[RMDB]
RNA sequence: GGGAACGACUCGAGUAGAGUCGAAAACAGUACUCAUGGAUCCUGACGAUGCAGAGUACCUAGGGUACGAGGAUCUAGUGAUCCAGCUAGCUAGGCUAGACGUCUAGCUAGCAUCGUCUAGCAUGGCAGACUUGCGAUAUUUCGAUAUCGCAAGUCUAAAAGAAACAACAACAACAAC
Reactivity to DMS in 0.01 (KOAc 150mM, MgCl2 10mM, bicine 150mM(pH8.5), 24C), signal-to-noise 3, nucleotides 027 to 126: c110a170g010u000a090c100u010c030a070u000g010g000a070u000c100c100u000g000a060c070g000a020u000g020c090a100g020a160g010u010a020c020c030u010a170g020g020g010u000a020c020g010a120g000g010a020u000c010u000a120g020u020g020a020u010c000c010a130g020c060u000a020g000c010u020a010g000g010c000u000a090g000a140c150g010u000c000u000a020g000c010u000a000g000c010a040u000c030g000u000c040u000a050g030c090a060u000g000g000c260
Reactivity to 2A3 in 0.01 (KOAc 150mM, MgCl2 10mM, bicine 150mM(pH8.5), 24C), signal-to-noise 4, nucleotides 027 to 126: c010a020g080u100a050c020u040c040a120u060g050g040a090u130c030c050u080g030a050c050g030a020u040g060c040a010g020a030g160u000a000c000c010u170a120g250g040g020u060a010c020g030a060g000g000a010u020c020u130a170g140u100g190a010u000c000c000a010g000c030u000a000g020c000u000a000g020g000c000u070a100g080a300c050g030u020c000u000a000g000c010u000a000g000c000a010u000c000g010u010c020u020a020g060c030a040u050g060g000c060
The data come from the RNA Mapping Database (RMDB), library OK2TRN. An RNA of 177 nucleotides, treated with DMS and 2A3 and read out base by base. The RNA was probed in 150 mM KOAc, 10 mM MgCl2 and 150 mM bicine (pH 8.5) at 24 C. DMS adducts were read by reverse transcription with MarathonRT.